RNA sequence: GGGAACGACUCGAGUAGAGUCGAAAAUGUUUCCUCUUCCUAGGUCCGGAGUCGACCUCCAUCUGAUCCGUCCUGGCUCUCUUCGCCGGGGGAGCUCCCUCCCCGUCCUUGUCUUUUCUUAUUAUUCGCGGUGACCGGUUCGCCGGUCACAAAAGAAACAACAACAACAAC
Reactivity to 2A3 in 0.01 (KOAc 150mM, MgCl2 10mM, bicine 150mM(pH8.5), 24C), signal-to-noise 3, nucleotides 027 to 129: u100g030u000u000u010c000c000u030c020u080u000c000c010u020a020g000g000u020c040c040g080g010a040g010u040c020g070a100c020c000u030c020c000a070u000c070u070g020a060u010c010c000g040u030c010c000u030g000g000c000u020c000u020c010u060u070c030g030c020c000g000g000g000g030g010a000g010c040u030c060c000c000u030c000c000c000c000g060u050c020c000u020u070g070u080c000u030u050u020u000c000u020u090a170u070u090a100u070u130c040g010c050g110
Reactivity to DMS in 0.01 (KOAc 150mM, MgCl2 10mM, bicine 150mM(pH8.5), 24C), signal-to-noise 5, nucleotides 027 to 129: u080g060u020u040u010c030c070u000c100u020u000c030c130u020a050g030g060u010c000c000g030g030a120g050u040c070g000a130c090c000u010c000c040a060u020c090u040g010a090u020c000c000g050u020c040c030u030g050g030c050u030c080u010c040u020u030c050g030c080c060g010g030g100g030g010a080g030c030u050c060c010c010u020c020c030c000c020g040u020c030c030u010u080g010u040c070u000u060u030u010c000u020u060a190u030u000a140u000u000c080g030c060g040
Conditions: 150 mM KOAc, 10 mM MgCl2 and 150 mM bicine (pH 8.5), 24 C.
The record gives the reactivity of an RNA of 170 nucleotides to 2A3 and DMS.
Source: RMDB library 15KLIB, as collected in RNAgym.
The DMS profile rests on 12,805 reads.